[RMDB]
The record gives the reactivity of an RNA of 177 nucleotides to DMS and 2A3.
For DMS, 8,144 sequencing reads were counted.
The reactions ran in a buffer of 150 mM KOAc, 10 mM MgCl2 and 150 mM bicine (pH 8.5), at 24 C.
RNA sequence: GGGAACGACUCGAGUAGAGUCGAAAAUCUCAGGUCUUCGGACCUGAGAAAAAUAAAAUAAGCUAAUCGUCAAAGCACUACACUGUAGAUAUAGACGACAAAAAAGGACAAUCUUCGGAUUGUCCAACAUUAAUAUGAGGUUCGCCUCAUAUUAAUGAAAAGAAACAACAACAACAAC
Reactivity to DMS in 0.01 (KOAc 150mM, MgCl2 10mM, bicine 150mM(pH8.5), 24C), signal-to-noise 6, nucleotides 027 to 126: u000c000u000c000a010g000g000u000c000u000u010c170g020g010a010c000c000u010g000a010g000a000a020a050a080a070u000a050a030a030a060u010a130a140g000c020u010a240a080u000c010g010u000c000a070a020a030g010c010a300c000u000a010c010a130c180u000g020u010a010g010a030u000a020u000a120g000a010c000g010a040c300a000a040a050a050a080a120g000g000a010c000a000a010u000c000u000u010c190g020g010a010u000u010g010u000c000c000a020a040
Reactivity to 2A3 in 0.01 (KOAc 150mM, MgCl2 10mM, bicine 150mM(pH8.5), 24C), signal-to-noise 5, nucleotides 027 to 126: u000c000u000c000a000g010g010u000c010u010u100c220g100g010a000c010c000u000g000a000g000a000a020a000a000a000u030a010a010a000a010u240a140a070g010c020u020a040a060u030c010g010u000c010a050a050a060g030c020a030c030u030a010c300a060c120u250g010u030a000g000a010u010a000u010a080g000a010c010g020a000c060a000a140a020a010a010a020g000g000a000c010a000a000u000c010u030u090c240g060g000a000u000u010g000u020c000c000a000a000